Overview: The record gives the reactivity of an RNA of 177 nucleotides to 2A3 and DMS. Conditions: 150 mM KOAc, 10 mM MgCl2 and 150 mM bicine (pH 8.5), 24 C. 2A3 adducts were read by reverse transcription with SuperScript II with manganese. The DMS profile rests on 1,156 reads.
[RMDB]
RNA sequence: GGGAACGACUCGAGUAGAGUCGAAAAAGAAAUAGCGUACACCACACUCAGACUGUACGCUAAGUAAGUGUGUGUUCUAUAACGUCCAAUUGAACACACACUCCGUUGGACCGAGUGUAAGAAAAAAACUUAUCAAGUCCUUCGGGACUUGAUAAGUAAAAGAAACAACAACAACAAC
Reactivity to 2A3 in 0.01 (KOAc 150mM, MgCl2 10mM, bicine 150mM(pH8.5), 24C), signal-to-noise 2, nucleotides 027 to 126: a010g100a020a070a030u000a000g020c000g010u020a000c010a020c030c030a050c000a000c030u030c000a000g020a250c020u030g000u010a020c000g010c010u000a010a000g070u050a080a020g000u000g010u000g000u000g000u000u010c090u050a150u080a210a040c100g190u080c040c000a070a090u040u050g010a000a000c030a000c000a000c000a000c010u020c000c050g100u030u110g060g000a020c050c020g010a040g050u010g020u040a120a030g230a140a030a010a010a000a010
Reactivity to DMS in 0.01 (KOAc 150mM, MgCl2 10mM, bicine 150mM(pH8.5), 24C), signal-to-noise 2, nucleotides 027 to 126: a080g000a110a080a090u000a010g000c000g020u000a010c010a080c300c050a100c080a000c040u000c040a080g040a250c130u000g010u000a000c000g000c000u000a000a070g010u000a060a030g010u000g000u000g020u000g010u000u020c000u010a050u010a060a070c110g000u010c100c090a110a110u000u010g000a010a020c000a000c030a010c000a010c020u000c030c030g000u000u030g000g000a040c030c080g000a020g070u000g000u000a110a100g020a000a000a010a020a060a100